[RMDB]
RNA sequence: GGGAACGACUCGAGUAGAGUCGAAAAUUUUCUUAUUAUUCCGAGGAUGUUUCCCAGCCAGGGAUUUUCAUCCUCGAGUUUCUUGAUGGUUCUCCUGCUCUUCCGGAGCCUUCUUUCGAGGUCUUCCAAACUAAUAAGUUCGCUUAUUAGAAAAGAAACAACAACAACAAC
Reactivity to DMS in 0.01 (KOAc 150mM, MgCl2 10mM, bicine 150mM(pH8.5), 24C), signal-to-noise 5, nucleotides 027 to 129: u030u030u000u020c050u010u000a130u060u050a130u080u040c090c000g020a030g000g020a000u000g000u030u020u010c000c000c000a130g030c290c280a120g000g030g020a000u020u030u010u020c000a000u020c010c000u010c010g000a040g030u010u000u000c000u020u030g020a100u020g000g040u010u010c040u040c030c040u010g000c040u000c010u010u020c070c090g000g000a120g000c100c030u020u020c040u020u010u050c010g010a070g010g010u000c040u000u000c020c050a050a090a200
Reactivity to 2A3 in 0.01 (KOAc 150mM, MgCl2 10mM, bicine 150mM(pH8.5), 24C), signal-to-noise 6, nucleotides 027 to 129: u040u030u040u020c030u060u180a190u220u090a120u180u070c070c020g000a010g000g000a000u000g010u010u000u020c010c000c000a020g170c130c130a070g060g000g010a000u080u020u020u120c000a000u000c000c000u010c000g010a040g010u030u030u010c030u040u090g080a110u110g020g010u050u000c010u000c010c000u040g050c000u020c010u060u010c020c010g030g020a020g000c010c000u040u020c010u010u090u040c020g030a060g010g090u010c020u020u000c000c000a040a080a080
Background
The data come from the RNA Mapping Database (RMDB), library 15KLIB. This 170-nucleotide RNA was probed chemically with DMS and 2A3. Reactivities are given for positions 27 through 129. For 2A3 the reverse transcriptase was SuperScript II with manganese. For DMS the reverse transcriptase was MarathonRT. The RNA was probed in 150 mM KOAc, 10 mM MgCl2 and 150 mM bicine (pH 8.5) at 24 C.